[RMDB]
RNA sequence: GGGAACGACUCGAGUAGAGUCGAAAAGAAGACAUUGUGAUGGAUGAAAAAGCUAGGUUUAGAGCAGGAUGCUUAAUGUUUAAUCUUGCUAUGUUGCUGCAACACCUCGUCAAAAUGUGUAGCCAUAGUAGUAUGGAUUCUUCGGAAUCCAUACUACAAAAGAAACAACAACAACAAC
Reactivity to 2A3 in 0.01 (KOAc 150mM, MgCl2 10mM, bicine 150mM(pH8.5), 24C), signal-to-noise 3, nucleotides 027 to 126: g070a060a010g080a000c020a020u020u060g030u040g020a030u040g050g070a040u070g100a090a040a030a000a010g020c030u040a050g040g150u130u120u150a070g030a000g020c010a010g020g030a020u050g000c040u060u160a150a040u180g090u050u100u040a040a040u020c000u010u010g000c000u010a020u080g160u110u090g050c040u020g020c010a020a020c000a020c000c030u050c010g040u010c010a000a010a040a050u070g010u010g050u100a010g000c000c020a020u040a080
Reactivity to DMS in 0.01 (KOAc 150mM, MgCl2 10mM, bicine 150mM(pH8.5), 24C), signal-to-noise 3, nucleotides 027 to 126: g010a150a140g000a030c030a030u010u000g000u010g010a020u000g010g010a050u010g000a030a070a110a140a070g010c030u000a070g010g020u000u000u000a130g000a020g010c020a020g010g010a010u000g000c100u010u010a070a080u010g020u010u000u010a060a050u000c030u010u000g010c020u000a070u000g000u010u000g000c030u020g000c120a090a070c050a010c060c030u010c050g020u010c050a030a020a040a040u010g010u000g010u000a080g010c030c020a070u010a080

An RNA of 177 nucleotides, treated with 2A3 and DMS and read out base by base. Source: RMDB library OK2TST, as collected in RNAgym. The RNA was probed in 150 mM KOAc, 10 mM MgCl2 and 150 mM bicine (pH 8.5) at 24 C. For 2A3 the reverse transcriptase was SuperScript II with manganese. DMS adducts were read by reverse transcription with MarathonRT. The DMS profile rests on 4,011 reads.